An RNA of 177 nucleotides, treated with DMS and 2A3 and read out base by base. Conditions: 150 mM KOAc, 10 mM MgCl2 and 150 mM bicine (pH 8.5), 24 C. For DMS, 1,766 sequencing reads were counted. As a SHAPE reagent, 2A3 marks flexible, mostly unpaired nucleotides at the ribose 2'-OH. 2A3 adducts were read by reverse transcription with SuperScript II with manganese.

RNA sequence: GGGAACGACUCGAGUAGAGUCGAAAAGAUAUGGAGACUUCCAUGGAGCAGUGUCUCGGAAACGAGACAUACUGCUAUGAAGUGGAAGUCUCCUAAGUCAAAACCGUAGUGGUUCGCCACUACGGAACGUAACGCAUGAGUUCGCUCAUGCGUUACGAAAAGAAACAACAACAACAAC
Reactivity to DMS in 0.01 (KOAc 150mM, MgCl2 10mM, bicine 150mM(pH8.5), 24C), signal-to-noise 2, nucleotides 027 to 126: g000a040u000a300u010g000g020a000g020a020c000u000u000c010c000a000u000g030g000a080g010c000a020g000u000g000u000c000u000c000g030g000a090a040a120c010g000a010g010a000c000a010u010a010c020u010g010c000u000a190u020g020a160a260g000u000g000g000a010a000g010u010c000u010c000c000u000a000a080g000u000c030a150a050a100a220c000c000g000u000a020g020u000g000g020u000u020c300g010c000c000a010c000u000a010c000g010g000a000a020
Reactivity to 2A3 in 0.01 (KOAc 150mM, MgCl2 10mM, bicine 150mM(pH8.5), 24C), signal-to-noise 1, nucleotides 027 to 126: g000a000u000a010u060g010g000a000g000a000c010u010u040c000c000a000u070g070g090a190g050c000a000g010u000g000u000c000u000c000g010g020a040a030a010c010g000a010g000a020c010a000u070a030c000u000g000c000u090a300u300g180a070a030g000u000g000g020a010a000g000u000c000u000c000c000u010a000a000g000u010c000a000a000a050a110c000c000g000u000a000g000u020g100g100u060u090c300g050c080c000a000c000u010a000c020g010g000a000a000